Chemical mapping of a 177-nucleotide RNA with 2A3 and DMS.
Values cover nucleotides 27 to 126.
For DMS the reverse transcriptase was MarathonRT.
For 2A3, 37,515 sequencing reads were counted.
Conditions: 150 mM KOAc, 10 mM MgCl2 and 150 mM bicine (pH 8.5), 24 C.

RNA sequence: GGGAACGACUCGAGUAGAGUCGAAAAGAUAUGGAUCGACAGGAUUGAAAGGGAGAAUGUUCGGAAACGAACAGUCGAAGAACUUUCUCGAUUCGAUCCUAAGUCAAAACCCAGCUUCGGCUGGGAACCAAUAUCUUAGGUUCGCCUAAGAUAUUGGAAAAGAAACAACAACAACAAC
Reactivity to 2A3 in 0.01 (KOAc 150mM, MgCl2 10mM, bicine 150mM(pH8.5), 24C), signal-to-noise 9, nucleotides 027 to 126: g050a010u130a070u230g070g020a050u060c030g010a020c070a100g130g120a300u100u130g050a060a030a020g160g040g010a040g000a030a030u020g000u000u010c000g010g030a050a040a030c010g040a060a040c040a060g020u020c020g060a120a040g000a030a020c000u020u030u000c020u010c030g080a110u050u020c000g000a000u000c000c000u020a090a030g030u000c020a010a020a070a200c000c000c010a000g000c000u050u090c250g170g000c000u000g000g000g010a000a000
Reactivity to DMS in 0.01 (KOAc 150mM, MgCl2 10mM, bicine 150mM(pH8.5), 24C), signal-to-noise 9, nucleotides 027 to 126: g010a090u010a260u010g010g000a050u010c040g010a030c290a090g010g010a060u010u000g000a010a020a050g000g000g010a060g010a030a020u000g010u000u000c000g020g000a090a080a110c000g010a060a050c120a050g010u000c010g000a220a160g000a060a070c010u000u000u000c000u000c020g000a240u000u000c000g000a010u000c000c000u000a030a080g000u010c040a070a050a100a120c010c000c000a000g010c000u000u010c220g030g010c000u000g010g000g000a000a030